[RMDB]
RNA sequence: GGGAACGACUCGAGUAGAGUCGAAAAGGCAGAAGGUUCCUCGGGUCGCAAGCAGUGGAACAAGCUCAUCGUCGCCGAGGUGUCCACUGGGGAUCAGCUCGCGGUCCGCGUCGCAGCUAUAGGUCUCGAAGCAGUAUUUAUUCGUAAAUACUGCUUCAAAAGAAACAACAACAACAAC
Reactivity to DMS in 0.01 (KOAc 150mM, MgCl2 10mM, bicine 150mM(pH8.5), 24C), signal-to-noise 9, nucleotides 027 to 126: g020g000c060a050g010a110a120g010g000u000u000c020c000u000c030g010g000g010u000c020g020c110a090a080g000c030a030g020u000g000g000a060a070c090a090a110g010c030u000c050a120u000c110g010u010c090g020c060c060g000a050g010g010u000g000u000c010c010a050c040u000g010g000g000g000a080u000c050a090g010c020u000c080g020c030g000g000u000c030c060g010c110g010u010c040g010c040a060g010c040u000a100u010a130g010g010u000c030u010c080
Reactivity to 2A3 in 0.01 (KOAc 150mM, MgCl2 10mM, bicine 150mM(pH8.5), 24C), signal-to-noise 9, nucleotides 027 to 126: g090g010c040a020g020a220a040g080g010u040u040c000c000u010c010g010g000g010u030c020g000c030a030a030g010c010a010g010u050g030g030a090a070c040a120a040g050c010u020c030a140u090c070g170u070c050g040c120c030g010a020g020g070u050g040u030c000c010a020c020u020g000g020g030g000a040u060c030a010g040c010u050c050g020c020g010g010u030c050c020g010c030g010u020c020g000c010a020g000c010u040a050u080a210g010g040u020c020u010c100
An RNA of 177 nucleotides, treated with DMS and 2A3 and read out base by base. DMS adducts were read by reverse transcription with MarathonRT. For 2A3, 31,771 sequencing reads were counted.